[RMDB]
RNA sequence: GGGAACGACUCGAGUAGAGUCGAAAAAUCCUCCCCUGAGAGGCCUCUUCCUAGGUCCGGAGUCUACCUCCAUCUGGUCCGUCCGGGCCCUCUUCGCCGGAGGCGCCCCCUCCCCGUCCUUAUCCUUGCCCACAGCUCUUCGGAGCUGUGAAAAGAAACAACAACAACAAC
Reactivity to 2A3 in 0.01 (KOAc 150mM, MgCl2 10mM, bicine 150mM(pH8.5), 24C), signal-to-noise 5, nucleotides 027 to 129: a030u040c000c000u010c000c000c000c000u020g070a040g020a040g100g020c010c000u050c020u100u050c020c030u060a070g010g010u010c010c000g040g010a010g010u050c040u080a080c010c010u050c030c010a110u040c040u080g020g010u050c050c020g040u040c030c040g000g000g000c000c000c000u000c020u070u070c040g080c060c030g040g010a020g000g010c040g040c000c000c010c000c000u000c000c000c000c000g030u030c020c010u050u110a090u090c000c020u020u060g040c000c020
Reactivity to DMS in 0.01 (KOAc 150mM, MgCl2 10mM, bicine 150mM(pH8.5), 24C), signal-to-noise 5, nucleotides 027 to 129: a100u010c010c020u030c000c010c040c040u050g000a050g040a100g030g010c000c000u020c060u040u030c040c060u020a100g000g040u020c030c060g000g020a020g000u030c000u050a150c000c020u040c070c080a020u030c000u040g020g020u020c060c040g020u030c080c130g030g020g000c040c040c020u040c040u030u020c120g030c160c090g040g010a080g000g020c120g030c030c040c010c010c010u010c000c000c000c000g020u000c040c000u020u010a050u070c090c040u060u010g000c000c060
The record gives the reactivity of an RNA of 170 nucleotides to 2A3 and DMS.
DMS adducts were read by reverse transcription with MarathonRT.
The 2A3 profile rests on 14,382 reads.
Reactivities are given for positions 27 through 129.